[RMDB]
An RNA of 177 nucleotides, treated with 2A3 and DMS and read out base by base.
It was measured as part of the RMDB library OK2TRN.
2A3 adducts were read by reverse transcription with SuperScript II with manganese.
Conditions: 150 mM KOAc, 10 mM MgCl2 and 150 mM bicine (pH 8.5), 24 C.
For DMS the reverse transcriptase was MarathonRT.
RNA sequence: GGGAACGACUCGAGUAGAGUCGAAAACAGUCAAUGUGAAGGCGGGCCAGACCAUCGCCGCAUUCUACCAGAGCACCGUCAUGAUCUUUGGCACGAUGGCUCGCUACAUUCUGAGAGUUAGGGAAAACGAGUAAUAUACCUUCGGGUAUAUUACUCGAAAAGAAACAACAACAACAAC
Reactivity to 2A3 in 0.01 (KOAc 150mM, MgCl2 10mM, bicine 150mM(pH8.5), 24C), signal-to-noise 6, nucleotides 027 to 126: c010a000g080u080c050a010a040u040g010u090g190a150a040g050g010c000g010g000g010c000c010a030g030a110c000c030a080u090c060g030c040c020g010c000a010u120u030c020u080a080c020c040a030g000a010g070c040a020c080c050g110u110c050a080u120g050a090u040c050u080u090u070g030g000c050a010c110g080a080u040g000g010c000u000c010g000c010u020a010c010a020u250u110c030u030g050a040g010a020g110u110u180a080g000g060g000a010a060a020a030
Reactivity to DMS in 0.01 (KOAc 150mM, MgCl2 10mM, bicine 150mM(pH8.5), 24C), signal-to-noise 7, nucleotides 027 to 126: c040a090g000u000c130a040a030u000g010u000g010a070a070g010g010c010g020g000g000c000c010a070g010a140c120c080a080u010c090g010c050c040g010c110a070u000u010c050u000a100c060c040a050g010a050g000c110a040c040c040g010u010c130a080u010g010a050u010c030u000u000u000g020g010c070a060c130g010a120u000g000g010c010u000c010g020c000u010a030c030a040u000u000c050u000g010a130g000a100g010u000u000a050g010g010g000a060a040a110a140